Conditions: 150 mM KOAc, 10 mM MgCl2 and 150 mM bicine (pH 8.5), 24 C.
This 177-nucleotide RNA was probed chemically with 2A3 and DMS.
For 2A3, 6,892 sequencing reads were counted.
RNA sequence: GGGAACGACUCGAGUAGAGUCGAAAAUGCAACAGGUUUGCCAUCAAAUUGGGGACAUGGGCUUCGAGGCCAGCAUUGCAGAAGGAAAGGCAGCCUCCUGGCCCUCAAGGUCCUUGCCUGCCCAGGAAUCUGUAUAGGGGUUCGCCCCUAUACAGAUAAAAGAAACAACAACAACAAC
Reactivity to 2A3 in 0.01 (KOAc 150mM, MgCl2 10mM, bicine 150mM(pH8.5), 24C), signal-to-noise 4, nucleotides 027 to 126: u120g010c030a030a010c030a100g050g040u110u110u080g080c040c020a070u110c080a090a120a200u190u120g000g010g000g000a010c040a050u030g000g000g000c000u010u020c020g010a000g000g010c010c060a070g000c040a040u020u200g020c050a060g070a300a040g150g090a080a050a020g060g000c010a000g000c000c000u000c010c010u010g020g000c000c010c000u000c010a020a030g070g000u000c000c000u000u010g000c000c000u030g020c000c000c000a010g020g080a070
Reactivity to DMS in 0.01 (KOAc 150mM, MgCl2 10mM, bicine 150mM(pH8.5), 24C), signal-to-noise 6, nucleotides 027 to 126: u010g010c130a090a120c050a080g000g020u010u010u000g020c040c060a060u010c100a030a090a150u010u010g020g010g010g010a030c020a060u000g010g010g010c000u000u010c210g000a040g010g010c000c020a140g010c070a060u000u000g000c070a130g000a150a120g010g020a050a040a060g000g010c030a300g010c020c010u010c030c020u000g000g000c020c010c020u010c110a030a090g000g010u000c000c020u000u010g000c020c020u000g010c010c010c020a150g000g010a150